[RMDB]
RNA sequence: GGGAACGACUCGAGUAGAGUCGAAAACUCAACUGACAUACAAGGGGAGGUUUCGGCCAAAUGUUGUAUGCAGAAAGCGUGAGGAAGGUAACACUUAGACACUCACGAGUAGCGGUUCGGCAGUAGUAAAGGUCCUGGCGCUUCGGCGCCAGGACAAGAUUGCCUUAUUGUUCGCAAUAAGGCAAUCAAAAGAAACAACAACAACAAC
Reactivity to DMS in 0.01 (KOAc 150mM, MgCl2 10mM, bicine 150mM(pH8.5), 24C), signal-to-noise 1, nucleotides 027 to 156: c080u000c040a080a150c020u000g000a190c070a100u010a080c070a080a080g030g010g020g010a300g010g000u010u000u020c090g060g000c020c000a050a100a130u020g000u000u000g010u000a050u000g000c030a130g000a110a120a080g020c060g070u000g000a010g070g000a120a040g010g020u000a080a090c140a160c030u010u000a080g030a190c080a080c030u020c060a090c060g030a090g000u000a050g020c030g000g010u010u000c030g020g000c060a140g000u020a070g020u020a080a050a090g030g000u000c010c010u000g000g000c000g040c110u030u000c300g000g000c000g060c000c000a000g030g000a000c000a010a020
Reactivity to 2A3 in 0.01 (KOAc 150mM, MgCl2 10mM, bicine 150mM(pH8.5), 24C), signal-to-noise 1, nucleotides 027 to 156: c030u030c010a030a000c040u030g030a110c000a000u070a000c000a050a060g010g020g020g000a020g040g030u030u010u120c120g170g000c000c000a040a060a030u110g000u060u010g000u010a010u000g010c010a000g070a050a010a000g160c000g020u010g020a000g010g090a120a030g040g000u080a100a060c050a000c080u030u110a020g050a070c030a010c110u000c000a020c000g000a030g000u060a020g000c060g020g100u090u070c040g080g040c040a040g020u130a000g020u030a050a180a130g090g000u000c000c000u000g010g000c000g020c000u040u080c170g110g040c040g010c000c020a000g000g000a000c000a000a000

Chemical mapping of a 207-nucleotide RNA with DMS and 2A3.
It was measured as part of the RMDB library M2RFPK.
For DMS, 1,513 sequencing reads were counted.
The reactions ran in a buffer of 150 mM KOAc, 10 mM MgCl2 and 150 mM bicine (pH 8.5), at 24 C.
High 2A3 reactivity points to a flexible backbone, as in loops and unpaired stretches.